[RMDB]
Source: RMDB library OK2TRN, as collected in RNAgym. An RNA of 177 nucleotides, treated with 2A3 and DMS and read out base by base. Values cover nucleotides 27 to 126. As a SHAPE reagent, 2A3 marks flexible, mostly unpaired nucleotides at the ribose 2'-OH. For DMS, 716 sequencing reads were counted. For 2A3 the reverse transcriptase was SuperScript II with manganese. The reactions ran in a buffer of 150 mM KOAc, 10 mM MgCl2 and 150 mM bicine (pH 8.5), at 24 C.
RNA sequence: GGGAACGACUCGAGUAGAGUCGAAAAGGCUGUGCCCUAACCUAGCAGUGUUACCAACUGACUGGUAUGAGAUUCUUGUCCCCAACAAGAUGGGGAGCCAGAUCAUGAGGUACGCGGGCUUUACAAGGUUUCACUGCGAGUUCGCUCGCAGUGAAACAAAAGAAACAACAACAACAAC
Reactivity to 2A3 in 0.01 (KOAc 150mM, MgCl2 10mM, bicine 150mM(pH8.5), 24C), signal-to-noise 2, nucleotides 027 to 126: g000g000c080u120g170u250g260c050c000c000u050a100a050c000c000u000a000g000c000a010g010u070g040u140u030a000c000c000a020a020c020u050g020a010c010u000g000g000u030a080u210g180a170g100a150u250u030c040u090u170g060u010c000c000c010c000a050a080c040a110a000g150a080u080g000g040g020g020a000g000c010c030a020g030a300u010c010a010u030g000a000g040g000u000a000c000g040c000g000g280g000c040u030u070u110a040c030a000a030g100
Reactivity to DMS in 0.01 (KOAc 150mM, MgCl2 10mM, bicine 150mM(pH8.5), 24C), signal-to-noise 1, nucleotides 027 to 126: g010g030c060u010g010u000g010c020c000c050u030a080a070c040c000u000a050g030c010a070g000u010g010u030u000a050c030c000a040a300c260u000g000a030c010u000g000g030u010a070u010g030a130g010a200u000u000c030u000u000g010u010c030c050c000c050a060a210c110a060a100g010a080u000g010g010g000g000a130g000c070c030a010g000a200u000c000a030u020g000a300g000g000u010a030c000g080c010g000g040g010c000u010u000u000a100c220a110a130g000